[RMDB]
Structure probing data (DMS) for a 177-nucleotide construct.
RNA sequence: GGGAACGACUCGAGUAGAGUCGAAAAUGUGGGGGGUCUCUUGGUUUAAUUGCUUUCUCCUUUGGGGGACACACGUGCUGCCUAUGGAUGUUCCUAGGCUAGGAGUCACAUUGGACCUGCACGAGCAGCAUGAGCCUGUAUUCGUACAGGCUCAUGCAAAAGAAACAACAACAACAAC
Reactivity to DMS in 0.01 (KOAc 150mM, MgCl2 10mM, bicine 150mM(pH8.5), 24C), signal-to-noise 1, nucleotides 027 to 126: u010g040u000g000g000g000g010g020g020u000c030u000c000u000u010g000g020u000u030u020a040a130u000u000g020c090u000u000u000c040u000c020c050u000u000u000g030g000g030g000g020a060c140a070c210a130c090g050u000g000c000u010g020c020c060u010a020u000g020g000a130u010g000u000u000c010c000u000a000g010g010c110u000a020g010g010a050g000u000c070a050c070a070u010u000g040g000a090c100c080u010g000c030a030c050g030a130g010c080a080
It was measured as part of the RMDB library OK2TRN.
The reactions ran in a buffer of 150 mM KOAc, 10 mM MgCl2 and 150 mM bicine (pH 8.5), at 24 C.